[RMDB]
Conditions: 150 mM KOAc, 10 mM MgCl2 and 150 mM bicine (pH 8.5), 24 C. Chemical mapping of a 177-nucleotide RNA with DMS and 2A3. The 2A3 profile rests on 2,819 reads.
RNA sequence: GGGAACGACUCGAGUAGAGUCGAAAAGAUUUACGGCGGGAAAGGUCCCGGGUGCGGCACCCACCGAAACGCGCCGAGGUCCCGGGUGCGGCACCUACCGAAAGGCGCGGAAACCGCCGGAAAGAAAGAUUUAUAUACGAUUCGUCGUAUAUAAAUCAAAAGAAACAACAACAACAAC
Reactivity to DMS in 0.01 (KOAc 150mM, MgCl2 10mM, bicine 150mM(pH8.5), 24C), signal-to-noise 3, nucleotides 027 to 126: g010a180u000u010u010a060c020g010g020c020g000g010g010a080a110a150g000g000u010c010c010c070g030g000g010u010g010c010g010g010c010a040c000c010c000a160c080c040g000a090a120a080c040g030c020g000c020c020g020a170g000g000u000c240c300c100g010g000g010u000g000c020g010g000c030a020c030c040u000a060c090c060g000a060a110a200g020g020c080g000c060g000g000a040a100a140c020c000g010c000c000g000g000a030a040a060g000a130a110a130
Reactivity to 2A3 in 0.01 (KOAc 150mM, MgCl2 10mM, bicine 150mM(pH8.5), 24C), signal-to-noise 1, nucleotides 027 to 126: g010a010u060u080u120a070c010g010g000c000g010g000g070a090a140a090g060g010u010c050c020c030g010g010g000u020g000c050g100g000c020a020c000c010c010a040c030c010g040a070a060a060c050g030c000g010c030c030g020a060g030g030u090c110c110c000g000g000g000u000g000c000g040g000c020a020c000c010u020a030c000c000g060a100a020a010g040g000c050g020c030g030g040a070a020a010c010c010g000c000c000g000g010a040a030a000g050a030a080a010
2A3 adducts were read by reverse transcription with SuperScript II with manganese. For DMS, 2,803 sequencing reads were counted.